[RMDB]
RNA sequence: GGGAACGACUCGAGUAGAGUCGAAAACGUCAGCCCUGUGCUGGGGAUGCUGUUGUGCGCAGACCGAAGGAGCAGCCCACAGGGCGUCCUGCCUCCCCGGGGGCGAGGGCCUGAUUCUGGGGGUUGCGUUUGUUACAUGGUUCGCCAUGUAACAAACAAAAGAAACAACAACAACAAC
Reactivity to DMS in 0.01 (KOAc 150mM, MgCl2 10mM, bicine 150mM(pH8.5), 24C), signal-to-noise 3, nucleotides 027 to 126: c070g010u010c050a050g010c000c020c120u000g000u010g010c060u000g010g030g010g000a100u000g000c030u000g030u000u000g010u010g010c130g020c040a060g010a120c030c030g010a120a110g020g000a180g010c000a020g000c010c010c000a050c020a010g010g020g000c080g010u010c000c020u000g010c010c000u010c010c020c170c270g030g000g000g000g000c020g000a030g020g010g000c030c170u010g020a110u000u010c010u000g010g000g000g000g010u000u000g010c030
Reactivity to 2A3 in 0.01 (KOAc 150mM, MgCl2 10mM, bicine 150mM(pH8.5), 24C), signal-to-noise 1, nucleotides 027 to 126: c060g110u030c050a010g000c000c020c040u190g040u110g040c070u060g030g010g040g020a060u090g000c060u060g040u170u100g010u120g080c110g000c060a010g060a160c010c050g040a080a050g040g040a130g050c000a000g000c020c010c000a020c020a020g020g030g140c000g000u030c000c000u020g020c000c010u050c000c020c090c080g020g010g020g030g000c000g060a040g010g000g000c010c070u250g020a200u170u030c010u010g030g000g000g000g020u030u020g010c000